[RMDB]
RNA sequence: GGGAACGACUCGAGUAGAGUCGAAAAACUGGUAUUAUCGUGCUCAUUUUGCAGUUGUGGUCUGCAGAUGUUACAGCACGUGGUGUUGCGAAGACGCAACCUGCAAAAUUAGCUGCUUUUGAAGGUAGCCCAAACCAAAUUUCGAUUUGGUUUGGGCAAAAGAAACAACAACAACAAC
Reactivity to DMS in 0.01 (KOAc 150mM, MgCl2 10mM, bicine 150mM(pH8.5), 24C), signal-to-noise 2, nucleotides 027 to 126: a100c050u000g010g020u010a040u000u000a040u010c080g010u010g020c010u000c060a030u030u000u000u000g010c020a010g010u000u000g020u010g010g010u010c010u010g000c040a040g020a060u000g010u000u010a110c110a100g020c060a050c080g020u010g000g000u000g000u000u000g000c020g010a120a050g010a050c020g030c020a020a020c120c060u000g000c020a030a020a010a020u000u000a020g000c030u010g000c120u000u000u010u000g000a150a100g020g030u010a140
Reactivity to 2A3 in 0.01 (KOAc 150mM, MgCl2 10mM, bicine 150mM(pH8.5), 24C), signal-to-noise 2, nucleotides 027 to 126: a010c070u130g000g060u270a120u130u110a110u190c070g020u050g000c000u010c000a010u000u040u030u020g000c000a000g000u020u020g080u090g070g070u020c000u010g020c010a030g020a130u120g030u130u120a030c060a060g060c100a020c120g050u030g060g000u090g020u030u010g050c030g120a300a030g040a030c020g020c000a000a030c030c020u000g000c060a000a040a040a010u020u010a020g030c020u070g000c000u060u090u090u280g130a080a030g040g010u050a000
Conditions: 150 mM KOAc, 10 mM MgCl2 and 150 mM bicine (pH 8.5), 24 C. Structure probing data (DMS and 2A3) for a 177-nucleotide construct. DMS adducts were read by reverse transcription with MarathonRT.